[RMDB]
RNA sequence: GGGAACGACUCGAGUAGAGUCGAAAAAAUAUUGGGUUAGAUUUUGGUACUACCUUUUCAACAGCCGCUCUUUUUGCAUCGGAUAACAAAAUCGAAACACUUAAGUUAUUUGGUGAUGACCUCCAACCACUGAAUGACGAUUCGUCGUCAUUCAGUGAAAAGAAACAACAACAACAAC
Reactivity to 2A3 in 0.01 (KOAc 150mM, MgCl2 10mM, bicine 150mM(pH8.5), 24C), signal-to-noise 3, nucleotides 027 to 126: a030a010u240a090u080u080g060g020g000u050u050a050g020a170u090u060u080u300g050g010u040a090c030u060a040c020c000u000u020u030u120c060a080a040c040a080g020c030c010g060c030u090c020u090u120u000u050u110g010c000a000u030c000g040g010a020u030a040a050c020a020a050a050a050u170c070g080a000a160a050c070a010c090u110u110a090a050g010u100u040a090u080u010u010g050g010u020g050a150u060g070a040c010c000u040c020c000a040a060c040
Reactivity to DMS in 0.01 (KOAc 150mM, MgCl2 10mM, bicine 150mM(pH8.5), 24C), signal-to-noise 2, nucleotides 027 to 126: a090a030u000a020u000u000g020g000g020u000u000a140g010a090u010u000u020u000g020g060u000a110c120u000a060c050c010u010u000u030u000c060a070a040c220a100g040c090c040g010c080u000c020u000u000u000u010u000g000c060a030u010c050g000g010a060u000a020a040c020a020a020a040a030u000c110g010a130a010a060c090a040c100u000u000a060a130g000u000u000a020u000u000u000g000g010u000g020a090u030g010a120c070c000u000c050c110a060a110c170
The data come from the RNA Mapping Database (RMDB), library OK2TRN.
An RNA of 177 nucleotides, treated with 2A3 and DMS and read out base by base.
For 2A3 the reverse transcriptase was SuperScript II with manganese.
The DMS profile rests on 1,557 reads.
Reactivities are rounded to 0.1 and cut off at 0 and 3.